[RMDB]
RNA sequence: GGGAACGACUCGAGUAGAGUCGAAAAAGCCCUUGGGGGCAGGGCUGGAACCGGGGCUAGAACCGGGGCUAGGGCCGGGGGCAGGUGGUCCUGCCUGCUCUAUACUUAGACCAGUGGAGCCAGUCUGCAAAGCCAAUGGAUUCGUCCAUUGGCUUUGAAAAGAAACAACAACAACAAC
Reactivity to DMS in 0.01 (KOAc 150mM, MgCl2 10mM, bicine 150mM(pH8.5), 24C), signal-to-noise 2, nucleotides 027 to 126: a100g000c000c000c000u010u020g030g050g010g030g040c270a070g000g010g010c030u010g010g010a090a070c020c010g010g000g020g010c050u010a050g000a140a160c030c040g010g000g030g030c060u000a050g000g000g000c110c130g000g000g020g010g000c010a000g020g020u000g010g020u020c080c070u010g000c010c000u000g000c010u000c010u000a100u010a130c090u000u000a040g010a070c020c010a050g000u000g020g000a080g000c000c030a040g010u000c010u000g000
Chemical mapping of a 177-nucleotide RNA with DMS. DMS adducts were read by reverse transcription with MarathonRT. The RNA was probed in 150 mM KOAc, 10 mM MgCl2 and 150 mM bicine (pH 8.5) at 24 C.